[RMDB]
RNA sequence: GGGAACGACUCGAGUAGAGUCGAAAAGUUGGUGAGCGGAUAAGGUCCUGAACAGAUGCCCUCCGGGCGUCCACGGCUGACGGUUGAUUCCUCCUCCUGACUGAGUGCACAAGGCCCGCUUGGUUGACGAUAAGCACUUUUUCGAAAGUGCUUAUCGAAAAGAAACAACAACAACAAC
Reactivity to 2A3 in 0.01 (KOAc 150mM, MgCl2 10mM, bicine 150mM(pH8.5), 24C), signal-to-noise 5, nucleotides 027 to 126: g050u020u030g010g050u100g050a050g020c050g020g020a050u050a180a060g030g010u050c010c010u040g020a060a020c020a060g030a060u060g000c000c010c000u100c080c090g000g020g020c010g020u010c010c020a070c070g030g000c030u010g020a020c010g040g030u060u050g060a130u060u050c000c000u000c020c000u000c000c010u010g020a040c000u020g020a020g020u060g010c010a030c010a090a030g040g020c000c020c000g020c050u080u050g070g030u020u060g050a020
Reactivity to DMS in 0.01 (KOAc 150mM, MgCl2 10mM, bicine 150mM(pH8.5), 24C), signal-to-noise 6, nucleotides 027 to 126: g010u010u010g010g020u000g000a090g020c300g000g000a070u020a070a140g000g030u000c010c030u010g010a080a080c190a120g000a050u000g010c020c010c000u010c140c150g010g020g010c020g010u010c010c060a090c080g000g010c030u000g000a110c090g000g000u000u010g000a170u010u000c000c020u000c040c020u000c010c020u000g000a060c040u000g000a090g010u000g000c080a080c060a060a080g000g010c020c010c020g000c060u010u010g000g000u010u000g000a220